[RMDB]
RNA sequence: GGGAACGACUCGAGUAGAGUCGAAAAGUACCUGAAACCAGAUAGUGACAGCCAGAUGUGGCGCGUAAGGAAUGAAUUCUUCCGAAAGAAUCAGUGGUAACAUUGUAGUAUGAGGAGGUUGGACUAGCAGCGUUUGAGAUUUCGAUCUCAAACGCUGAAAAGAAACAACAACAACAAC
Reactivity to DMS in 0.01 (KOAc 150mM, MgCl2 10mM, bicine 150mM(pH8.5), 24C), signal-to-noise 2, nucleotides 027 to 126: g030u000a150c050c000u000g000a060a020a080c070c060a070g020a110u000a080g010u010g060a200c060a210g000c020c000a040g000a070u070g040u000g000g050c020g000c130g020u000a180a090g000g000a120a020u010g000a150a150u090u000c000u000u000c000c000g000a190a140a070g000a160a070u000c010a050g040u000g000g000u110a020a050c060a020u010u000g010u010a030g010u000a010u030g000a300g000g030a030g020g030u030u000g010g000a080c070u000a100g010
Reactivity to 2A3 in 0.01 (KOAc 150mM, MgCl2 10mM, bicine 150mM(pH8.5), 24C), signal-to-noise 1, nucleotides 027 to 126: g010u000a000c000c000u150g010a000a060a000c020c080a070g020a070u160a100g040u030g050a010c000a030g000c010c000a000g000a230u240g120u070g150g000c050g000c000g150u230a020a220g000g000a050a040u030g000a050a170u030u050c020u100u020c000c000g150a260a000a000g030a000a000u000c000a000g000u050g010g020u070a150a000c050a000u000u000g000u000a020g000u020a010u030g070a020g020g000a000g020g000u080u050g030g000a000c000u010a000g020
This 177-nucleotide RNA was probed chemically with DMS and 2A3. Conditions: 150 mM KOAc, 10 mM MgCl2 and 150 mM bicine (pH 8.5), 24 C.